[RMDB]
Structure probing data (DMS and 2A3) for a 177-nucleotide construct. For DMS the reverse transcriptase was MarathonRT. For DMS, 4,776 sequencing reads were counted. Conditions: 150 mM KOAc, 10 mM MgCl2 and 150 mM bicine (pH 8.5), 24 C. High 2A3 reactivity points to a flexible backbone, as in loops and unpaired stretches.
RNA sequence: GGGAACGACUCGAGUAGAGUCGAAAAGAACGAAACUUCGGUUUCGUUCAAAUAAUGCGUAGCUCGCGCUACGCAGGCAACGAGUAGGUCGUGCCACCAACAAAAGAUUUUAGUUCGCUAAAAUCAAUCAUCAUGUAUUCUUCGGAAUACAUGAUGAAAAAGAAACAACAACAACAAC
Reactivity to DMS in 0.01 (KOAc 150mM, MgCl2 10mM, bicine 150mM(pH8.5), 24C), signal-to-noise 5, nucleotides 027 to 126: g010a010a010c000g000a010a000a000c000u000u020c190g030g010u000u000u000c000g020u000u000c000a040a100a080u010a110a100u000g010c000g030u010a010g010c000u000c300g000c300g000c000u010a000c010g010c010a010g010g000c020a050a030c030g000a070g010u010a140g020g020u000c010g010u000g010c000c010a160c070c050a070a040c190a050a090a090a110g000a020u000u000u010u000a020g010u000u010c190g030c000u010a000a010a010a000u000c000a110a160
Reactivity to 2A3 in 0.01 (KOAc 150mM, MgCl2 10mM, bicine 150mM(pH8.5), 24C), signal-to-noise 6, nucleotides 027 to 126: g000a000a000c000g000a000a010a000c010u060u120c210g070g000u000u000u000c000g000u000u000c000a000a000a000u120a020a040u070g000c000g000u000a000g000c030u040c140g070c030g000c040u000a000c000g000c010a000g000g020c020a090a120c020g020a020g080u220a110g160g300u040c020g000u010g000c000c010a050c030c020a020a090c030a020a140a020a050g010a010u000u000u010u010a020g000u030u040c230g030c090u010a000a010a010a010u010c010a000a100